The record gives the reactivity of an RNA of 207 nucleotides to DMS and 2A3.
2A3 adducts were read by reverse transcription with SuperScript II with manganese.
DMS adducts were read by reverse transcription with MarathonRT.
The data come from the RNA Mapping Database (RMDB), library OK3TST.
For 2A3, 1,196 sequencing reads were counted.
The reactions ran in a buffer of 150 mM KOAc, 10 mM MgCl2 and 150 mM bicine (pH 8.5), at 24 C.
RNA sequence: GGGAACGACUCGAGUAGAGUCGAAAAUCAUCUCUUGAUACACCUUGGAGGGACACCAGGGAUUUGAAAGGAAGAAAAGGCUCCAUUAGAUGCAUAGGGCCUCCUGAAUGCACACGGGAGGGCAUGGAGUGGCACCUCUAUUCUGUCUCUGAGCUUAAUUACUGACGGGAUUCGUCCCGUCAGUAAUAAAAGAAACAACAACAACAAC
Reactivity to DMS in 0.01 (KOAc 150mM, MgCl2 10mM, bicine 150mM(pH8.5), 24C), signal-to-noise 1, nucleotides 027 to 156: u000c070a100u010c020u010c000u010u000g000a180u000a130c010a070c030c010u000u000g040g020a080g050g010g000a130c030a160c010c020a020g010g000g000a090u000u010u000g010a050a120a300g000g050a020a080g010a010a090a060a140g010g010c040u000c030c050a110u010u000a140g010a100u010g000c090a160u010a110g000g010g090c040c000u010c010c000u000g010a040a090u010g000c110a130c180a080c110g000g000g000a040g020g010g030c030a100u000g010g000a070g030u040g010g000c080a070c010c010u010c040u000a180u010u000c020u010g000u000c030u000c020u000g000a140g030c030u010u000a060
Reactivity to 2A3 in 0.01 (KOAc 150mM, MgCl2 10mM, bicine 150mM(pH8.5), 24C), signal-to-noise 3, nucleotides 027 to 156: u070c030a040u020c020u010c030u120u090g040a050u140a090c030a070c020c020u020u050g030g010a050g060g030g010a010c010a010c030c020a010g030g040g040a010u210u070u050g130a090a060a040g020g060a030a050g030a060a100a010a000g040g000c020u010c000c000a010u110u110a090g110a140u150g040c050a090u120a130g090g000g090c010c010u010c000c010u040g030a160a060u110g030c060a010c020a020c060g020g010g000a020g040g040g030c010a010u020g000g010a000g030u040g000g040c020a040c020c000u030c010u020a110u090u050c020u000g020u000c000u000c010u030g040a040g040c030u060u050a010